[RMDB]
RNA sequence: GGGAACGACUCGAGUAGAGUCGAAAAGUAUUUUUUUUUAGCAUUACCAUAUCCUAUUUGGCAAUGAAUUUCAUAUACUAGAGUAUGUUCUUAAGAUUGGAUUGUCUAAAGUGAAAUUCAUUGCCAACGUACUAAAGCUAUUCGUAGCUUUAGUACGAAAAGAAACAACAACAACAAC
Reactivity to DMS in 0.01 (KOAc 150mM, MgCl2 10mM, bicine 150mM(pH8.5), 24C), signal-to-noise 5, nucleotides 027 to 126: g000u000a000u000u000u010u000u010u000u030u030u030a080g010c120a040u010u010a060c050c050a080u010a100u010c050c020u000a080u010u000u000g010g010c010a020a000u000g010a010a010u000u000u000c000a010u000a080u020a080c140u000a020g010a030g010u010a030u000g010u000u000c010u000u010a090a150g000a120u020u000g010g010a020u000u000g000u000c000u010a020a040a150g010u000g000a010a000a000u000u000c000a000u000u000g000c000c000a000a010
Reactivity to 2A3 in 0.01 (KOAc 150mM, MgCl2 10mM, bicine 150mM(pH8.5), 24C), signal-to-noise 7, nucleotides 027 to 126: g010u010a090u040u070u020u020u000u010u020u050u110a050g030c050a060u080u090a090c030c020a060u050a080u200c020c000u030a080u130u060u060g000g000c010a000a000u000g000a000a000u000u010u010c010a010u090a010u010a120c080u030a020g010a010g090u080a030u170g050u040u000c030u060u120a180a120g020a180u080u160g030g010a010u020u060g040u060c020u010a030a020a040g010u000g000a000a000a000u000u000c000a000u000u000g010c010c000a000a000